[RMDB]
RNA sequence: GGGAACGACUCGAGUAGAGUCGAAAAGCGCGGAGAAAGACGAGGUUCGGCGCAUUGUAGGGCUUGUGCAUCACGAGGGCCUUGGUGACGCUGGACACGCAGCGGCACAAGUCCUCCGCGAGCGACAAGUCGCAGUAGUGUUCGCACUACUGCGACUAAAAGAAACAACAACAACAAC
Reactivity to DMS in 0.01 (KOAc 150mM, MgCl2 10mM, bicine 150mM(pH8.5), 24C), signal-to-noise 2, nucleotides 027 to 126: g010c000g000c020g000g000a070g020a100a030a130g000a150c020g000a090g000g020u010u000c050g000g040c000g000c100a020u010u000g000u030a050g030g020g000c000u000u000g020u000g050c130a140u030c070a050c120g000a100g010g000g040c040c010u000u010g000g040u020g020a150c010g000c020u000g020g000a120c180a060c170g000c030a080g000c050g010g000c000a120c070a030a050g000u000c020c000u000c000c010g020c030g000a110g040c040g000a050c030a040
Reactivity to 2A3 in 0.01 (KOAc 150mM, MgCl2 10mM, bicine 150mM(pH8.5), 24C), signal-to-noise 3, nucleotides 027 to 126: g020c000g020c000g000g060a040g040a030a200a080g030a050c040g000a040g050g000u050u040c040g020g000c020g000c040a000u020u160g230u130a070g000g030g020c000u020u070g050u050g070c080a090u120c050a110c030g010a060g040g060g030c060c000u020u080g050g000u000g050a050c010g000c000u020g010g030a030c020a000c160g060c020a070g020c000g080g000c020a000c000a080a000g000u020c000c000u000c000c020g000c020g000a010g030c060g010a020c000a100